[RMDB]
An RNA of 207 nucleotides, treated with 2A3 and DMS and read out base by base.
The data come from the RNA Mapping Database (RMDB), library RNAMAK.
For 2A3 the reverse transcriptase was SuperScript II with manganese.
DMS adducts were read by reverse transcription with MarathonRT.
High DMS reactivity at an A or C suggests that its Watson-Crick edge is free.
The RNA was probed in 150 mM KOAc, 10 mM MgCl2 and 150 mM bicine (pH 8.5) at 24 C.

RNA sequence: GGGAACGACUCGAGUAGAGUCGAAAAUCCUAAGUCACAUAGACGAGUCUCGCUUGGAUUUAUUGCUAAGACAGUCUCGGAAACGAGACAAUGACGGCAAUUGUCAGCGAGACGAGACUAUGUGAUAUGGAAAAAACUGGGCAUUCGUGCCCAGUAAUUACACGUUUAUGUUCGCAUAAACGUGUAAAAAAGAAACAACAACAACAAC
Reactivity to 2A3 in 0.01 (KOAc 150mM, MgCl2 10mM, bicine 150mM(pH8.5), 24C), signal-to-noise 6, nucleotides 027 to 156: u020c010c000u030a110a040g010u010c000a000c000a010u000a000g030a030c020g000a010g000u000c000u000c000g060c040u070u190g220g010a090u280u300u130a020u060u050g000c000u040a100a060g070a140c020a080g100u010c000u000c010g030g040a120a090a060c010g000a000g010a000c020a100a090u070g020a020c060g010g010c010a000a000u010u010g020u020c000a000g000c000g000a000g000a000c000g000a000g000a000c000u000a000u000g000u000g000a000u010a030u000g010g070a080a120a020a050a000a020c000u010g010g000g020c010a010u030u060c200g120u060g000c000c000c000a000g000u000a000a000
Reactivity to DMS in 0.01 (KOAc 150mM, MgCl2 10mM, bicine 150mM(pH8.5), 24C), signal-to-noise 2, nucleotides 027 to 156: u000c000c010u000a070a190g010u000c000a020c000a020u000a010g010a170c040g010a300g000u000c000u000c000g020c010u010u010g050g010a020u000u000u000a020u010u010g020c010u030a060a170g030a130c050a090g000u000c000u010c000g020g010a110a100a300c020g000a070g010a000c000a100a050u000g000a100c240g000g010c010a000a000u000u000g010u000c030a060g000c010g020a030g010a020c000g000a300g000a140c010u000a000u000g010u040g010a020u000a040u000g000g000a000a090a060a080a070a050c030u000g010g010g010c010a110u000u000c260g010u000g040c000c000c000a010g010u000a000a060